[RMDB]
RNA sequence: GGGAACGACUCGAGUAGAGUCGAAAAAGGGAAGCACGCUUGAGGCUGAACCGCGAAAUAGUAUCAAGCUCACCAUGACGAAGCCUGUCGCUUGGCGUCUAAUUGGUUAAAUAAAUGAGCGACUAAGCAUGUAGUACCGAGAACGUAGGCUUUUUGGCUAAACUUACUACUUCGGUAGUAAGUUUAGAAAAGAAACAACAACAACAAC
Reactivity to DMS in 0.01 (KOAc 150mM, MgCl2 10mM, bicine 150mM(pH8.5), 24C), signal-to-noise 4, nucleotides 027 to 156: a100g030g010g010a140a130g030c030a050c080g010c030u000u010g030a100g010g020c030u010g020a080a300c040c040g000c060g000a080a100a090u000a060g010u010a060u000c050a050a150g010c010u000c050a070c010c010a050u000g000a300c300g000a040a040g020c000c020u000g030u000c080g020c150u000u010g000g010c010g010u000c000u000a060a140u000u000g020g010u000u010a040a050a150u000a060a080a100u010g000a030g020c020g020a060c010u000a080a090g020c040a080u010g010u000a100g010u000a070c030c010g000a120g020a070a050c060g000u000a090g020g030c020u000u010u010u000u010g010g000
Reactivity to 2A3 in 0.01 (KOAc 150mM, MgCl2 10mM, bicine 150mM(pH8.5), 24C), signal-to-noise 6, nucleotides 027 to 156: a000g070g000g010a060a010g030c030a010c100g010c020u030u030g040a020g050g000c010u020g030a090a020c050c030g020c030g050a060a050a040u180a060g080u070a030u160c040a070a000g000c020u030c030a040c020c000a020u070g020a030c070g040a030a010g000c000c020u060g050u060c030g020c070u040u080g020g010c010g010u000c030u030a080a080u100u060g030g000u050u120a060a060a040u140a020a050a030u130g020a010g010c010g010a010c010u040a030a030g040c030a040u090g050u130a050g050u030a060c020c050g020a020g010a070a030c090g030u070a040g060g000c000u080u030u010u070u090g070g000
Conditions: 150 mM KOAc, 10 mM MgCl2 and 150 mM bicine (pH 8.5), 24 C. Chemical mapping of a 207-nucleotide RNA with DMS and 2A3. DMS adducts were read by reverse transcription with MarathonRT. 2A3 adducts were read by reverse transcription with SuperScript II with manganese. The DMS profile rests on 7,771 reads.